[RMDB]
RNA sequence: GGGAACGACUCGAGUAGAGUCGAAAACACUUAUAAAAGCUCUUGAUCUUUAUGGAUAUGAUUUACCUUUUACCACCUACCUGAAGGAUGAGCUGAGACCAAAGGAGAAGGUUAAAAUGGGCAAAACCAUGAUUAUUUCGUUCGCGAAAUAAUCAUGAAAAGAAACAACAACAACAAC
Reactivity to DMS in 0.01 (KOAc 150mM, MgCl2 10mM, bicine 150mM(pH8.5), 24C), signal-to-noise 4, nucleotides 027 to 126: c050a090c180u030u050a060u040a090a070a080a080g000c030u010c020u020u000g000a050u000c030u020u010u020a100u070g010g010a130u030a030u020g010a080u010u000u020a040c040c030u010u010u020u010a100c060c030a040c090c020u000a060c060c040u000g010a110a060g000g030a100u000g000a050g060c030u010g000a090g010a090c030c030a030a170a070g010g020a110g020a050a050g020g000u010u020a020a030a080a040u030g000g000g010c130a030a020a060a090c170
Reactivity to 2A3 in 0.01 (KOAc 150mM, MgCl2 10mM, bicine 150mM(pH8.5), 24C), signal-to-noise 7, nucleotides 027 to 126: c050a000c060u220u160a090u120a210a070a030a040g010c010u010c010u040u070g080a040u060c020u050u190u130a150u260g100g030a080u100a070u200g110a090u030u050u150a060c020c010u050u020u040u050a100c040c030a030c010c000u060a070c010c010u050g070a140a050g070g020a050u080g060a010g040c060u030g020a030g050a060c040c000a020a010a040g020g020a040g000a060a020g030g020u030u060a040a050a060a090u130g000g010g020c080a080a080a010a030c050
An RNA of 177 nucleotides, treated with DMS and 2A3 and read out base by base. The reactions ran in a buffer of 150 mM KOAc, 10 mM MgCl2 and 150 mM bicine (pH 8.5), at 24 C.